[RMDB]
RNA sequence: GGGAACGACUCGAGUAGAGUCGAAAAGGCCGAUCUGGCAUUCACCAUCGAUCCGGUCGACGGCACUUUCAAUUUUGCUUCCGGGGUGCCGCUUUUUGGCGUGAUGCUGGCGGUGGUGUCAAAAGGACAUAGCCGGAUGAUUCGUCAUCCGGCUAUGAAAAGAAACAACAACAACAAC
Reactivity to 2A3 in 0.01 (KOAc 150mM, MgCl2 10mM, bicine 150mM(pH8.5), 24C), signal-to-noise 2, nucleotides 027 to 126: g080g000c060c020g010a200u030c080u060g020g000c000a000u160u200c020a020c000c000a010u000c020g030a020u000c020c030g070g030u030c060g040a060c000g010g020c010a010c030u070u250u220c130a180a250u100u170u300u300g070c010u150u030c060c060g000g000g000g020u010g000c000c010g020c050u200u150u000u220u210g030g010c000g070u120g020a030u160g070c080u040g040g000c000g000g010u010g010g000u000g000u010c000a000a020a060a080g050g000a000
Reactivity to DMS in 0.01 (KOAc 150mM, MgCl2 10mM, bicine 150mM(pH8.5), 24C), signal-to-noise 2, nucleotides 027 to 126: g000g050c000c000g010a130u010c080u010g000g000c030a070u010u020c050a030c000c000a030u000c000g000a120u000c050c060g030g010u000c050g010a050c060g000g020c010a010c010u000u020u010c050a100a120u010u040u000u010g020c140u000u000c080c100g010g000g000g010u000g010c010c000g000c020u000u000u000u000u000g010g010c020g000u010g000a060u010g020c020u000g010g020c080g030g010u000g000g000u010g000u000c020a020a040a110a170g000g020a230